[RMDB]
RNA sequence: GGGAACGACUCGAGUAGAGUCGAAAAGAGAGCUGCUUCGGCAGCUCUCCGUCAGGUACUUCCUAUCUCAAUUACCUGUAGUGGCCAACGUCCGGAUAGGAAGAGAGCCCUGCUUCGGCAGGGCUAAAUAAGAUUGUCUGUUCGCAGACAAUCUUAUAAAAGAAACAACAACAACAAC
Reactivity to 2A3 in 0.01 (KOAc 150mM, MgCl2 10mM, bicine 150mM(pH8.5), 24C), signal-to-noise 1, nucleotides 027 to 126: g010a010g020a010g030c000u000g010c010u060u050c260g070g040c020a000g000c010u000c020u000c010c000g040u010c010a080g120g060u060a060c010u000u000c000c010u010a010u000c060u020c070a130a300u180u040a010c010c010u050g030u210a070g020u160g130g000c070c020a130a000c100g090u050c040c020g000g000a000u000a010g010g020a000a000g030a010g040a000g000c000c000c020u020g000c040u050u020c210g120g010c030a010g000g030g000c000u000a000a000
Reactivity to DMS in 0.01 (KOAc 150mM, MgCl2 10mM, bicine 150mM(pH8.5), 24C), signal-to-noise 3, nucleotides 027 to 126: g000a010g000a010g050c000u000g010c000u000u010c200g020g020c010a020g000c000u000c000u000c000c020g000u000c040a030g010g010u000a060c040u000u000c010c000u000a030u000c020u000c110a110a090u010u010a090c030c010u010g000u000a100g020u010g010g030c040c060a110a070c160g000u010c160c150g010g000a010u000a010g010g010a030a020g010a250g010a030g010c000c000c000u000g000c020u000u010c170g020g030c010a020g000g000g000c010u000a000a040
Overview: Structure probing data (2A3 and DMS) for a 177-nucleotide construct. The data come from the RNA Mapping Database (RMDB), library M2PK50. Conditions: 150 mM KOAc, 10 mM MgCl2 and 150 mM bicine (pH 8.5), 24 C. The 2A3 profile rests on 924 reads. For DMS, 2,221 sequencing reads were counted. 2A3 adducts were read by reverse transcription with SuperScript II with manganese.